[RMDB]
RNA sequence: GGGAACGACUCGAGUAGAGUCGAAAACACACAGUUUUGGACUGCCUGGCCAGGAAAUACAAGAGGCGAGUGCUAAGUGCAAUAACCAAAAGGGUGGCAGUUAGGCUGGCUAGAGAUGCCCUUAGCAGAGUGUGUUUGUUUUCGAACAAACACACUCAAAAGAAACAACAACAACAAC
Reactivity to DMS in 0.01 (KOAc 150mM, MgCl2 10mM, bicine 150mM(pH8.5), 24C), signal-to-noise 2, nucleotides 027 to 126: c020a110c190a070c120a060g010u000u000u000u000g020g040a150c020u030g030c110c000u020g010g000c000c070a120g030g000a070a070a130u030a070c130a070a080g000a080g010g030c050g010a120g010u000g020c000u000a040a100g000u000g010c010a090a030u000a100a080c000c070a090a050a140a190g000g010g030u000g000g000c000a090g000u000u000a030g000g010c030u000g000g040c060u020a060g000a090g000a050u000g000c000c060c020u000u000a090g010c020a110